Record summary:
Chemical mapping of a 207-nucleotide RNA with DMS and 2A3. For DMS the reverse transcriptase was MarathonRT.

RNA sequence: GGGAACGACUCGAGUAGAGUCGAAAAUCAUAGCAAGGGCAUUGGUCGCAGUAGUCGCCCCAGGUCUUCUCUUCGCCGCCGAUGGAAAAACCAGUUUUCAUUUCACAAAGCGCUUCCUCUACAGCUUCGAUUUUUUCGGCAUCGUUAUCCAUGAUUAAUCAGAAAUAGCAUUCGUGCUAUUUCUGAUAAAAGAAACAACAACAACAAC
Reactivity to DMS in 0.01 (KOAc 150mM, MgCl2 10mM, bicine 150mM(pH8.5), 24C), signal-to-noise 2, nucleotides 027 to 156: u010c060a080u010a110g010c050a100a080g000g020g030c020a110u020u010g000g010u000c050g030c030a160g020u000a110g010u010c040g020c020c000c010c020a140g010g000u000c020u010u000c010u000c040u010u010c060g020c030c040g050c050c030g060a110u010g010g000a020a050a070a060a070c030c020a140g010u000u000u000u010c000a150u000u030u020c060a090c080a070a100a100g010c040g020c070u000u010c020c020u000c030u000a060c040a100g000c060u000u000c040g000a030u000u000u000u000u000u000c020g000g040c040a100u000c050g010u010u000a100u000c020c030a110u010g010a150u000u010a070
Reactivity to 2A3 in 0.01 (KOAc 150mM, MgCl2 10mM, bicine 150mM(pH8.5), 24C), signal-to-noise 4, nucleotides 027 to 156: u070c010a030u130a030g020c020a030a080g050g010g000c030a030u030u090g040g010u080c050g000c040a030g040u150a020g040u020c050g030c020c000c000c000a020g030g010u010c000u080u020c030u020c000u060u100c040g010c020c000g010c010c010g020a040u030g010g040a030a030a010a050a040c040c020a030g010u020u020u070u080c030a080u050u090u100c070a060c030a060a080a030g030c030g000c050u080u040c010c020u030c010u040a040c030a040g010c020u070u070c030g030a040u020u000u020u020u070u060c010g010g000c020a030u020c010g030u010u060a050u090c040c040a050u080g040a090u300u300a220